An RNA of 207 nucleotides, treated with 2A3 and DMS and read out base by base. For DMS the reverse transcriptase was MarathonRT. The RNA was probed in 150 mM KOAc, 10 mM MgCl2 and 150 mM bicine (pH 8.5) at 24 C.

RNA sequence: GGGAACGACUCGAGUAGAGUCGAAAAGCUAGUCGGAGACGACUAGCAUCGAUCAGUUCGCUGAUCGUAAGGAGCAGUCAUACGCAGUCGACGCUCCGAUAGGCAUGGCCGACUGCGCUACUGUAAAAUCAGGAUAAUUAAUUAAUGAAGCCAUGCGGGAUUAGUCAUCAUUCGUGAUGACUAAUCCAAAAGAAACAACAACAACAAC
Reactivity to 2A3 in 0.01 (KOAc 150mM, MgCl2 10mM, bicine 150mM(pH8.5), 24C), signal-to-noise 4, nucleotides 027 to 156: g010c000u010a000g000u000c000g030g030a070g010a140c000g000a000c000u000a000g000c000a030u060c010g000a000u010c000a020g040u050u100c130g020c090u000g000a010u000c000g010u020a100a100g000g000a000g000c040a020g120u130c040a040u020a090c000g000c010a010g010u010c000g010a030c050g000c010u000c000c000g000a100u100a040g040g020c000a010u000g000g000c000c000g000a000c000u000g000c020g020c040u060a010c000u000g020u050a020a010a050a240u130c000a020g050g050a040u050a120a110u270u120a040a050u080u060a040a090u110g070a030a000g000c000c000a000u000g000c010g010
Reactivity to DMS in 0.01 (KOAc 150mM, MgCl2 10mM, bicine 150mM(pH8.5), 24C), signal-to-noise 1, nucleotides 027 to 156: g050c010u010a010g010u020c000g000g010a300g000a280c010g010a000c000u000a010g000c000a000u000c000g050a000u000c000a000g080u000u030c300g020c000u000g000a010u000c000g010u020a020a130g040g000a070g060c010a250g040u010c030a180u000a080c020g010c020a020g010u000c080g050a020c000g000c010u050c000c000g000a060u000a020g010g020c030a070u000g020g030c010c000g000a130c030u030g020c000g000c020u000a070c030u000g000u000a020a100a090a210u000c010a020g000g000a280u000a050a120u020u000a060a160u010u000a070a220u000g000a040a150g020c000c010a000u000g000c050g000